This 177-nucleotide RNA was probed chemically with DMS. DMS adducts were read by reverse transcription with MarathonRT. Reactivities are given for positions 27 through 126. The RNA was probed in 150 mM KOAc, 10 mM MgCl2 and 150 mM bicine (pH 8.5) at 24 C. It was measured as part of the RMDB library OK2TRN.

[RMDB]
RNA sequence: GGGAACGACUCGAGUAGAGUCGAAAAUUCUUGUUCGUUGCCACCGGCAUCGGCAAUGGUUCGAGCUACCGGAUGAUCUCGAGGAUCUUCCAGGUCAAAGGCGAAGUCGCCGGCGGGGAUCCGGAAACAACGUGAGGAGGUUCGCCUCCUCACGUUGAAAAGAAACAACAACAACAAC
Reactivity to DMS in 0.01 (KOAc 150mM, MgCl2 10mM, bicine 150mM(pH8.5), 24C), signal-to-noise 1, nucleotides 027 to 126: u000u000c030u010u000g010u030u040c040g010u000u000g010c010c030a110c120c090g030g040c050a110u000c040g010g030c020a050a070u000g010g020u000u000c010g010a090g000c130u000a060c040c000g000g000a060u000g020a040u010c000u000c100g020a230g010g010a030u000c020u000u010c020c010a100g010g010u030c130a070a140a100g030g010c000g030a180a110g000u000c050g030c000c020g020g020c130g010g010g010g000a050u000c010c010g000g000a090a120a210